The record gives the reactivity of an RNA of 207 nucleotides to DMS and 2A3. The DMS profile rests on 6,164 reads. High DMS reactivity at an A or C suggests that its Watson-Crick edge is free. The reactions ran in a buffer of 150 mM KOAc, 10 mM MgCl2 and 150 mM bicine (pH 8.5), at 24 C.
[RMDB]
RNA sequence: GGGAACGACUCGAGUAGAGUCGAAAAUGCAUGUCGAGUGUACAGUGGCACUCGUACUCCAAUCGCUGUAAUCAAUAGUUGCAAACGAUGACAACUACGGUGCUCAACUAGCUGCGUAAGCAGUGAAAGAUCACUUUUAGGGUUACGACCCUAUCGGCCUGUAUUUUAACUUCGGUUAAAAUACAGGAAAAGAAACAACAACAACAAC
Reactivity to DMS in 0.01 (KOAc 150mM, MgCl2 10mM, bicine 150mM(pH8.5), 24C), signal-to-noise 3, nucleotides 027 to 156: u020g040c070a070u010g010u000c040g010a080g040u000g060u000a110c060a200g020u000g050g000c020a030c020u000c010g000u010a020c050u000c040c050a130a090u000c000g030c030u000g030u000a050a070u000c050a130a120u010a100g010u000u000g010c000a050a060a100c030g010a110u000g010a070c050a050a060c020u000a050c160g010g050u010g010c140u000c010a010a040c060u000a280g020c000u010g000c010g030u000a140a210g030c000a010g000u000g010a110a140a190g000a040u000c000a020c020u000u000u000u000a060g010g010g000u000u000a100c060g020a110c000c000c040u000a030u010c050g020g010
Reactivity to 2A3 in 0.01 (KOAc 150mM, MgCl2 10mM, bicine 150mM(pH8.5), 24C), signal-to-noise 9, nucleotides 027 to 156: u160g020c060a030u120g020u120c020g000a020g000u000g010u030a110c070a100g050u120g080g000c010a000c010u000c000g020u050a030c030u040c040c030a040a060u080c050g000c020u060g040u180a050a050u100c110a060a140u060a130g020u010u020g020c030a060a120a080c130g070a120u110g070a120c010a030a010c030u080a060c070g020g000u010g000c010u000c010a010a030c040u010a000g000c000u010g000c000g040u100a120a060g000c000a000g000u010g020a010a010a000g010a010u010c000a000c000u070u060u050u080a020g010g000g020u010u040a050c150g040a040c020c000c000u030a080u080c030g070g000
It was measured as part of the RMDB library RSTRND. Reactivities are given for positions 27 through 156.